[RMDB]
Source: RMDB library OK2TST, as collected in RNAgym. An RNA of 177 nucleotides, treated with 2A3 and DMS and read out base by base. The DMS profile rests on 2,195 reads.
RNA sequence: GGGAACGACUCGAGUAGAGUCGAAAAAUGUGGGGCAGAUUAUUUUUAUAUUCGCAGUGUGUUUGAUGGUCACCAUAAUUGUGGUUGCCUUCCUUGCGUCUAUCAAACUUUGUAUUCAACUUUGCGGCAGUAGGACUCUUUUCGAAGAGUCCUACUGAAAAGAAACAACAACAACAAC
Reactivity to 2A3 in 0.01 (KOAc 150mM, MgCl2 10mM, bicine 150mM(pH8.5), 24C), signal-to-noise 1, nucleotides 027 to 126: a000u090g020u060g050g010g000g010c000a020g020a010u020u150a080u010u170u050u070u040a080u010a030u020u070c020g000c020a030g070u040g020u090g060u240u120u180g030a020u040g000g000u010c020a040c040c000a020u070a110a300u270u260g010u020g030g040u000u020g010c000c000u030u040c010c020u010u000g000c040g010u000c020u020a020u020c110a000a100a020c000u040u100u150g060u000a220u010u070c020a020a080c020u110u120u110g060c080g080g070
Reactivity to DMS in 0.01 (KOAc 150mM, MgCl2 10mM, bicine 150mM(pH8.5), 24C), signal-to-noise 2, nucleotides 027 to 126: a090u010g020u000g020g000g000g020c050a060g010a060u000u010a010u010u010u000u020u000a060u010a050u020u000c020g050c020a030g000u000g020u010g010u000u010u000g020a050u000g010g040u010c250a050c010c020a020u010a100a150u010u000g020u010g010g020u000u000g010c050c030u010u010c020c030u000u000g010c040g030u000c030u000a050u000c090a030a030a070c230u010u010u010g010u010a090u010u000c110a040a110c080u000u010u000g010c100g000g000
For 2A3, 822 sequencing reads were counted. For 2A3 the reverse transcriptase was SuperScript II with manganese. The RNA was probed in 150 mM KOAc, 10 mM MgCl2 and 150 mM bicine (pH 8.5) at 24 C.